RNA sequence: GGGAACGACUCGAGUAGAGUCGAAAAUCUCAGCUUUGUCAUAUGCCGGCAAACGUCUGGUGAAGGAUUUUAGUGUCAAAGGACAGAUGGUUAGCUUACAGGAGGAAGGCGAGGAGUAUACGCCGCGUUCCUUCGACCGCUUCGGCGGUCGAAGGAAAAAAGAAACAACAACAACAAC
Reactivity to DMS in 0.01 (KOAc 150mM, MgCl2 10mM, bicine 150mM(pH8.5), 24C), signal-to-noise 1, nucleotides 027 to 126: u000c000u000c020a020g030c000u000u000u000g050u010c000a010u040a020u050g010c090c020g000g000c000a150a170a050c070g010u020c020u040g000g000u060g000a300a120g000g000a000u010u100u000u020a070g000u040g000u000c010a000a140a110g060g070a220c060a020g000a040u000g010g000u020u000a070g010c040u000u000a150c120a070g050g040a010g020g000a060a080g020g000c070g010a080g000g000a280g020u040a110u050a120c020g020c000c000g000c040g000